[RMDB]
RNA sequence: GGGAACGACUCGAGUAGAGUCGAAAAAUCACUGCGGUGAUGGAACAAGAGGGUUUGUCGCAGUCCGUCGUGGCCGAUAAAGCGAAGUGCUCCAAGGCAUUCGUCGGACACCUCAUCUCCGGCCGGCGCGACUCCUGUACGCCCGAACUGGCCGCGCUCGUUAAGCUUCAUUCGUGAAGCUUAACGAAAAAGAAACAACAACAACAAC
Reactivity to 2A3 in 0.01 (KOAc 150mM, MgCl2 10mM, bicine 150mM(pH8.5), 24C), signal-to-noise 3, nucleotides 027 to 156: a010u080c040a070c050u070g030c090g010g050u050g050a160u140g090g030a120a080c080a140a060g050a060g120g030g010u180u280u250g090u110c030g040c040a000g010u030c020c020g000u020c010g000u100g140g010c020c010g040a090u190a150a080a000g020c090g080a110a040g060u080g110c080u070c120c060a060a060g030g010c070a090u060u090c040g040u020c010g020g010a010c030a050c060c020u100c060a120u070c060u010c030c000g000g020c020c000g010g000c020g000c040g010a000c020u040c030c020u060g040u080a010c040g020c000c000c000g010a050a020c020u020g010g000c000c020g020c010g010c000
Reactivity to DMS in 0.01 (KOAc 150mM, MgCl2 10mM, bicine 150mM(pH8.5), 24C), signal-to-noise 1, nucleotides 027 to 156: a080u010c030a050c040u010g030c060g060g020u000g010a110u000g000g000a110a110c040a040a140g000a150g010g000g010u000u000u000g020u000c040g010c020a100g000u010c050c030g010u010c040g000u010g030g020c020c000g000a100u000a020a060a080g020c120g000a040a030g010u010g020c020u000c010c170a090a260g030g050c070a250u000u000c070g000u000c020g000g000a000c040a000c050c070u000c060a080u020c050u010c090c020g020g010c010c000g000g000c000g000c030g000a050c030u000c030c020u020g000u000a040c050g000c010c000c000g000a010a070c020u000g000g000c030c000g020c030g020c130
Chemical mapping of a 207-nucleotide RNA with 2A3 and DMS. Conditions: 150 mM KOAc, 10 mM MgCl2 and 150 mM bicine (pH 8.5), 24 C. The DMS profile rests on 3,743 reads. Values are in units of 0.01, from 0 to 300, in steps of 10.